[RMDB]
RNA sequence: GGGAACGACUCGAGUAGAGUCGAAAACGGCUCUUCGGAGCCGCCACACUCCUAAGUCGACUCCGCUUGGUAGUACGAUAAGAAUCGGAAACGAUUCUUUUGACGUACUAUAAUCAAGCGUUGAGUCGAUAUGGACCUCCUGCUACUUCGGUAGCAAACUUCUUAGACUCUUCGGAGUCUAAGAAGUAAAAGAAACAACAACAACAAC
Reactivity to 2A3 in 0.01 (KOAc 150mM, MgCl2 10mM, bicine 150mM(pH8.5), 24C), signal-to-noise 4, nucleotides 027 to 156: c000g010g010c000u010c020u050u120c270g140g000a000g000c000c000g000c010c010a120c000a040c040u050c010c000u060a180a050g020u010c000g010a000c000u010c000c000g000c000u010u000g020g000u000a010g010u000a000c000g010a030u030a060a010g000a000a010u000c000g020g050a100a060a030c020g000a010u020u010c010u020u030u020u080g140a050c010g000u000a000c000u010a020u100a050a130u130c010a000a010g000c000g040u020u150g000a000g010u000c000g000a000u000a000u010g000g010a010c000c020u060c000c020u050g030c000u010a000c000u030u070c240g120g000u000a000g000c000a030a050
Reactivity to DMS in 0.01 (KOAc 150mM, MgCl2 10mM, bicine 150mM(pH8.5), 24C), signal-to-noise 1, nucleotides 027 to 156: c020g010g000c000u010c010u020u000c300g000g000a020g010c010c000g000c050c000a050c050a040c100u000c050c000u000a030a300g000u010c000g040a040c000u010c010c010g020c000u010u020g000g060u000a030g050u000a000c000g030a130u010a010a000g000a010a000u000c000g000g000a190a120a290c000g000a000u000u000c000u000u000u020u030g020a300c070g020u000a010c000u000a050u000a300a060u000c000a060a010g010c040g000u010u000g010a000g070u000c010g000a020u000a060u010g000g030a090c090c010u020c030c020u010g020c010u000a020c000u000u020c270g080g000u000a040g030c000a020a030